[RMDB]
RNA sequence: GGGAACGACUCGAGUAGAGUCGAAAACUAUCGGUAUUCGUACCGAUAGCCAUGGCUGAUAUAGCUCAGUUGGUAGAGCGCACCCUUGGUAAGGGUGAGGUCGGCAGUUCGAAUCUGCCUAUCAGCACCAGCAGAGGACACCUUUCGAGGUGUCCAAUGUUACGUAAUGAUUCGUCAUUACGUAACAAAAAGAAACAACAACAACAAC
Reactivity to DMS in 0.01 (KOAc 150mM, MgCl2 10mM, bicine 150mM(pH8.5), 24C), signal-to-noise 4, nucleotides 027 to 156: c000u010a010u000c010g020g050u010a030u000u010c300g080u010a010c010c010g000a000u000a000g020c010c030a100u010g030g060c000u020g000a070u000a020u000a170g020c010u000c010a300g000u010u000g040g010u010a040g000a050g020c010g000c000a010c010c000c010u000u010g040g010u020a300a070g000g010g020u010g010a020g000g020u000c030g020g010c000a020g000u000u000c040g000a300a060u000c010u010g010c000c020u010a010u000c000a020g020c010a080c040c000a100g000c120a140g020a140g000g000a030c010a000c000c000u000u000u000c230g020a040g030g040u000g010u000c000c000a010a030